[RMDB]
RNA sequence: GGGAACGACUCGAGUAGAGUCGAAAAAACUGUAUGAUAUUCUGAUCAGGAGUGAGGGACUGAGAUGGCCUCAGGCUCUCCAAUUUUCUUUCGGACCGCCCUUGGGAAUGGGAUUAAAUCUUGACCCCUAUUUGGAUGGGUUCGCCCAUCCAAAUAGAAAAGAAACAACAACAACAAC
Reactivity to DMS in 0.01 (KOAc 150mM, MgCl2 10mM, bicine 150mM(pH8.5), 24C), signal-to-noise 2, nucleotides 027 to 126: a100a080c070u010g010u000a090u000g000a150u010a110u020u000c060u010g000a060u000c050a030g030g010a100g040u020g020a040g010g000g020a040c030u020g000a020g030a300u020g000g030c260c000u000c000a020g000g000c000u000c010u000c010c040a080a000u000u020u000u000c020u030u020u000c050g030g000a130c130c100g010c030c000c020u010u000g000g020g010a120a110u010g000g000g000a060u020u000a110a090a160u010c050u000u000g000a290c010c000c020
Reactivity to 2A3 in 0.01 (KOAc 150mM, MgCl2 10mM, bicine 150mM(pH8.5), 24C), signal-to-noise 1, nucleotides 027 to 126: a000a000c170u180g110u230a140u030g060a050u080a180u250u160c060u040g100a110u180c080a050g110g030a110g080u170g010a020g000g010g000a000c020u010g000a000g010a130u060g210g000c060c000u000c000a000g000g000c020u000c010u050c010c000a000a040u110u050u030u000c030u000u020u090c020g040g000a090c040c000g060c000c030c000u030u020g080g000g060a080a020u020g020g000g050a010u140u270a030a130a070u030c020u030u080g110a120c000c000c070
The record gives the reactivity of an RNA of 177 nucleotides to DMS and 2A3.
Values cover nucleotides 27 to 126.
The reactions ran in a buffer of 150 mM KOAc, 10 mM MgCl2 and 150 mM bicine (pH 8.5), at 24 C.
DMS adducts were read by reverse transcription with MarathonRT.